[RMDB]
RNA sequence: GGGAACGACUCGAGUAGAGUCGAAAAUGCAUGCCUGGGCCCACAGGAAGUCGAUUGGAGCAAUGCGAGCUUGAAAUUAAGCUAGGGACAGGCCCCUCUAACCAGACUGCACAUACACAUGAGGCCAGUUGCGCGUACAGUUCGCUGUACGCGCAACAAAAGAAACAACAACAACAAC
Reactivity to 2A3 in 0.01 (KOAc 150mM, MgCl2 10mM, bicine 150mM(pH8.5), 24C), signal-to-noise 1, nucleotides 027 to 126: u080g000c000a110u140g000c050c000u040g040g200g000c000c000c000a080c000a000g080g000a010a000g100u060c070g060a110u050u050g000g000a040g010c030a140a210u160g050c000g000a020g000c020u080u040g050a100a000a000u210u120a020a020g010c090u000a120g040g040g060a000c080a040g080g020c000c000c000c000u000c010u010a040a040c130c000a000g000a050c010u040g000c070a000c030a110u100a010c090a060c000a080u240g010a080g050g040c050c000a030

Structure probing data (2A3) for a 177-nucleotide construct. The data come from the RNA Mapping Database (RMDB), library OK1LIB. For 2A3 the reverse transcriptase was SuperScript II with manganese.